The record gives the reactivity of an RNA of 177 nucleotides to 2A3 and DMS. It was measured as part of the RMDB library TTRDES.
RNA sequence: GGGAACGACUCGAGUAGAGUCGAAAAGAUAUGGAGCCAGUGCAAGAUGGAUUUCAGAUCGGAAACGAUCUGGUCCUAAUCUUGCACGGCUCCUAAGUCAAAAGAGAUUGGCUUCGGCCAAUCUCAAUCUACGACAUAUCUUCGGAUAUGUCGUAGAAAAAGAAACAACAACAACAAC
Reactivity to 2A3 in 0.01 (KOAc 150mM, MgCl2 10mM, bicine 150mM(pH8.5), 24C), signal-to-noise 2, nucleotides 027 to 126: g020a020u090a040u140g010g000a010g010c050c100a110g020u000g000c000a000a000g020a030u090g010g000a020u090u260u300c020a010g000a000u000c000g010g000a040a050a050c020g010a000u000c020u040g010g000u010c000c000u080a030a050u030c010u000u010g000c000a000c000g010g000c000u010c000c010u000a000a000g000u000c000a010a060a010a180g010a000g000a010u000u000g020g000c010u130u200c300g080g000c000c010a000a000u010c000u000c000a000a010
Reactivity to DMS in 0.01 (KOAc 150mM, MgCl2 10mM, bicine 150mM(pH8.5), 24C), signal-to-noise 2, nucleotides 027 to 126: g010a030u000a300u010g010g020a010g010c000c000a070g060u000g010c000a010a010g020a040u000g000g010a040u000u000u020c010a000g010a010u000c000g010g010a120a100a200c000g000a020u000c010u010g000g000u000c010c000u010a070a050u010c000u000u000g000c000a000c000g000g010c000u000c000c000u000a000a140g010u010c030a130a090a210a190g010a020g000a000u000u000g010g020c000u000u010c300g040g000c000c000a030a000u000c000u000c000a030a030

For DMS, 2,632 sequencing reads were counted. The RNA was probed in 150 mM KOAc, 10 mM MgCl2 and 150 mM bicine (pH 8.5) at 24 C. The 2A3 profile rests on 3,983 reads.